An RNA of 177 nucleotides, treated with 2A3 and DMS and read out base by base. The DMS profile rests on 18,283 reads.

RNA sequence: GGGAACGACUCGAGUAGAGUCGAAAAUGCGAAUCAGAUGUGUUCGCGCGAAUCGGUCACACGAGCCACCCAUCAACUCGGAAGAGCCGGGUGGGGCCGGGAGCAUCCGAGGCACCGCUUGCCUGACGAUAGAUGUAGGUUUCGACCUACAUCUAUCAAAAGAAACAACAACAACAAC
Reactivity to 2A3 in 0.01 (KOAc 150mM, MgCl2 10mM, bicine 150mM(pH8.5), 24C), signal-to-noise 9, nucleotides 027 to 126: u150g000c000g020a010a020u060c040a110g130a300u150g160u050g030u070u020c000g000c000g000c020g050a030a070u070c020g020g010u040c030a040c010a010c120g030a020g060c000c010a040c020c010c000a040u110c050a030a060c010u010c020g080g070a130a050g020a150g080c040c030g020g000g000u030g010g020g010g000c010c000g020g010g000a040g030c010a030u020c010c010g010a050g020g020c030a020c060c050g030c090u060u090g020c000c010u030g030a060c110
Reactivity to DMS in 0.01 (KOAc 150mM, MgCl2 10mM, bicine 150mM(pH8.5), 24C), signal-to-noise 7, nucleotides 027 to 126: u020g000c010g000a030a020u000c050a150g020a150u040g010u030g010u020u000c010g010c020g030c090g000a090a130u010c010g000g010u000c080a100c110a100c080g010a090g010c020c020a070c020c000c000a060u020c210a170a170c010u010c020g010g070a170a150g010a070g020c060c100g000g000g020u000g000g000g000g000c070c020g010g000g010a090g010c050a050u000c020c010g010a060g000g000c030a060c080c040g020c030u010u020g010c020c010u000g020a180c180